[RMDB]
RNA sequence: GGGAACGACUCGAGUAGAGUCGAAAACAGGCGCCUCUGGCUGUAAGGUCUUUGAGAACGAUUUCUCUGAAUUUGACAGCACCCAAAAUAACUUUUCACUUGGGCUUGAGUGUAUAAUUAUGGAGGAGUCUUUAGAAAGUUUCGACUUUCUAAAGACAAAAGAAACAACAACAACAAC
Reactivity to DMS in 0.01 (KOAc 150mM, MgCl2 10mM, bicine 150mM(pH8.5), 24C), signal-to-noise 3, nucleotides 027 to 126: c090a110g000g010c130g030c030c010u000c020u000g000g010c010u020g000u000a050a030g000g010u000c040u010u010u010g000a050g020a050a070c300g010a210u010u000u000c010u000c000u000g010a050a040u000u000u000g000a060c020a040g020c040a120c060c010c020a040a050a080a070u000a060a080c070u000u010u000u000c020a030c050u000u000g000g010g020c130u010u010g010a080g020u000g010u010a030u010a030a060u000u000a070u000g010g010a240g010g000a150
Reactivity to 2A3 in 0.01 (KOAc 150mM, MgCl2 10mM, bicine 150mM(pH8.5), 24C), signal-to-noise 3, nucleotides 027 to 126: c030a030g060g070c010g050c010c020u050c030u060g070g000c000u010g010u060a040a020g030g000u000c000u030u130u120g010a020g010a060a030c090g140a150u010u170u000c010u000c000u040g110a110a080u050u080u120g070a040c010a010g000c010a050c010c000c000a030a110a010a010u090a060a070c030u080u030u140u110c030a040c030u000u010g110g100g060c000u150u180g070a010g020u010g050u000a060u040a180a090u110u080a030u130g000g030a040g010g040a050

Description: An RNA of 177 nucleotides, treated with DMS and 2A3 and read out base by base. Reactivities are rounded to 0.1 and cut off at 0 and 3. The reactions ran in a buffer of 150 mM KOAc, 10 mM MgCl2 and 150 mM bicine (pH 8.5), at 24 C. The 2A3 profile rests on 2,274 reads.